[RMDB]
RNA sequence: GGGAACGACUCGAGUAGAGUCGAAAAUAAUUUGGAAAACAGUUUUUCAUUGCCUGUGGAGUGGAAAGUAGGCAUAACAUAAGGAAUGGUGCUAUCAUAACAAGACCGACAGCCUAAUUUGACCAUUUAAACUAUAUGCAUGUAUAACUUCAUUAACGGACUAUAGAGGGUUCGCCCUCUAUAGUCCAAAAGAAACAACAACAACAAC
Reactivity to 2A3 in 0.01 (KOAc 150mM, MgCl2 10mM, bicine 150mM(pH8.5), 24C), signal-to-noise 2, nucleotides 027 to 156: u060a000a090u070u150u090g020g010a000a080a030a000c010a000g000u000u000u000u070u090c000a020u180u070g000c000c000u030g030u000g020g080a010g000u000g000g020a020a000a000g020u000a010g010g010c000a000u040a060a030c010a010u030a010a050g000g050a040a030u070g030g050u000g090c050u040a040u140c010a050u080a100a050c040a170a000g050a020c010c020g020a000c000a000g000c000c000u040a060a090u020u060u170g050a030c050c000a000u000u000u210a100a090a000c010u070a030u000a030u240g000c000a010u000g110u090a010u040a080a010c000u100u150c060a020u300u300a050a040c000
Source information:
Source: RMDB library OK3TST, as collected in RNAgym. Structure probing data (2A3) for a 207-nucleotide construct. Values cover nucleotides 27 to 156. Conditions: 150 mM KOAc, 10 mM MgCl2 and 150 mM bicine (pH 8.5), 24 C. For 2A3 the reverse transcriptase was SuperScript II with manganese.